[RMDB]
RNA sequence: GGGAACGACUCGAGUAGAGUCGAAAAUGCCUGGAGAAGUUUGACACCAAAUUCAAAUUGGUGUUAGGGGAGCUGGGGCCUUUCAAAAGAGAGCUUUGUAGAGGCAAUCUUUUUGACUACUUUAAAACUGGAUAGGUAUGUUCGCAUAUCUAUUCAGAAAAGAAACAACAACAACAAC
Reactivity to DMS in 0.01 (KOAc 150mM, MgCl2 10mM, bicine 150mM(pH8.5), 24C), signal-to-noise 7, nucleotides 027 to 126: u030g010c020c020u000g000g010a090g000a090a120g010u020u010u010g010a030c010a010c000c000a010a020a130u040u060c300a080a140a140u000u000g000g010u000g010u000u000a040g020g000g000g000a060g020c050u000g010g010g010g000c050c060u010u010u010c030a000a020a030a020g000a040g000a300g010c010u010u000u030g020u040a120g010a050g000g000c010a040a130u010c000u000u000u010u010u000g010a060c290u010a070c080u010u000u020a050a040a080a150
Reactivity to 2A3 in 0.01 (KOAc 150mM, MgCl2 10mM, bicine 150mM(pH8.5), 24C), signal-to-noise 9, nucleotides 027 to 126: u060g040c000c020u030g040g020a090g010a100a060g060u070u120u120g010a000c000a000c000c000a000a030a050u180u130c070a050a070a140u060u000g010g000u000g000u010u000a000g000g010g000g010a050g020c040u030g010g000g030g010c010c020u050u100u050c030a030a020a030a000g040a010g000a010g020c010u070u080u110g190u170a100g030a030g110g000c000a000a030u030c000u020u070u010u020u050g040a050c030u070a030c020u090u090u120a060a070a040a040
Source information
This 177-nucleotide RNA was probed chemically with DMS and 2A3. 2A3 is a SHAPE reagent: it acylates the 2'-hydroxyl of flexible nucleotides of all four kinds. Conditions: 150 mM KOAc, 10 mM MgCl2 and 150 mM bicine (pH 8.5), 24 C. For DMS, 18,050 sequencing reads were counted.